[RMDB]
RNA sequence: GGGAACGACUCGAGUAGAGUCGAAAACUCGAAAGAGACCUGCAUAUCUUAGGCAGAUGACCAAGUCCCGUCUGAAAAGCGAAAGCCCUAAGAUAUGCAGCUGUGAAGACUUGACGCAGAAAAUAAAGAGGAUUUUAAUGUUCGCAUUAAAAUCCUCAAAAGAAACAACAACAACAAC
Reactivity to DMS in 0.01 (KOAc 150mM, MgCl2 10mM, bicine 150mM(pH8.5), 24C), signal-to-noise 2, nucleotides 027 to 126: c000u000c000g020a090a190a110g010a020g000a210c300c060u010g000c000a000u000a010u000c000u000u000a000g000g000c010a010g000a000u000g000a300c210c000a000a000g030u000c020c300c050g000u000c000u040g020a260a080a060a260g030c020g000a150a100a140g000c000c000c000u000a030a000g030a000u000a000u030g000c000a000g000c010u000g000u000g000a060a090g010a000c060u000u000g000a300c020g000c000a000g000a190a060a040a110u050a080a080a100
Reactivity to 2A3 in 0.01 (KOAc 150mM, MgCl2 10mM, bicine 150mM(pH8.5), 24C), signal-to-noise 3, nucleotides 027 to 126: c000u000c000g030a020a080a000g060a010g040a050c030c000u000g000c000a010u000a010u010c000u000u000a000g000g010c010a000g010a020u010g000a040c090c000a000a000g030u000c060c080c000g050u000c000u010g100a240a230a050a040g030c040g040a100a020a000g010c000c000c000u000a000a000g000a000u000a010u000g000c010a000g010c000u010g000u000g030a070a070g000a010c010u020u020g010a010c010g000c010a010g070a060a110a020a020u240a080a100a020
This 177-nucleotide RNA was probed chemically with DMS and 2A3. DMS adducts were read by reverse transcription with MarathonRT. The reactions ran in a buffer of 150 mM KOAc, 10 mM MgCl2 and 150 mM bicine (pH 8.5), at 24 C. For 2A3 the reverse transcriptase was SuperScript II with manganese.